[RMDB]
Description
Conditions: 150 mM KOAc, 10 mM MgCl2 and 150 mM bicine (pH 8.5), 24 C. An RNA of 207 nucleotides, treated with 2A3 and DMS and read out base by base. Values cover nucleotides 27 to 156. In probing experiments dimethyl sulfate is read out at A N1 and C N3, which are open when not base-paired.
RNA sequence: GGGAACGACUCGAGUAGAGUCGAAAAAUCAAGUGGACUCUGUAGGCCACUGUGAGGGCCCUUUGGCUUUCACACUGCAGAGUUUUGAGCAGAGAAGGGACGUGAUCGAGUUCAUGUUUUGCAAGGAUUCUUCUGACUGCUCUGCUCAAUUGUGGGGGUAUUGUUCUGUAUUCGUACAGAACAAUACAAAAGAAACAACAACAACAAC
Reactivity to 2A3 in 0.01 (KOAc 150mM, MgCl2 10mM, bicine 150mM(pH8.5), 24C), signal-to-noise 3, nucleotides 027 to 156: a000u180c120a100a010g080u080g090g020a010c010u000c000u010g020u040a000g050g050c120c140a040c130u020g000u000g010a010g000g000g010c030c000c000u040u080u280g010g000c020u000u020u010c010a010c010a010c000u000g000c000a010g020a000g000u010u010u010u020g000a000g000c000a000g010a010g030a060a100g080g030g050a040c050g080u090g020a050u110c100g050a030g070u070u040c020a040u110g080u080u250u190u220g070c050a070a060g030g030a050u070u030c010u030u010c000u030g110a090c010u020g000c000u010c000u000g000c010u000c040a020a040u070u090g020u120g010g010g000g010
Reactivity to DMS in 0.01 (KOAc 150mM, MgCl2 10mM, bicine 150mM(pH8.5), 24C), signal-to-noise 2, nucleotides 027 to 156: a120u010c070a050a130g020u010g000g000a040c000u000c010u000g020u000a020g000g010c050c080a090c300u000g010u000g000a030g010g010g020c000c010c260u010u000u010g050g010c020u000u000u020c010a020c000a080c040u000g000c000a050g010a050g020u000u000u000u000g000a050g010c000a000g000a060g000a060a050g000g000g000a030c020g010u010g000a030u010c030g010a300g000u000u010c000a050u000g010u000u000u000u000g020c140a090a190g000g000a150u000u000c120u010u000c020u020g010a180c010u000g000c000u000c000u000g000c000u000c000a040a070u010u000g010u000g010g010g000g010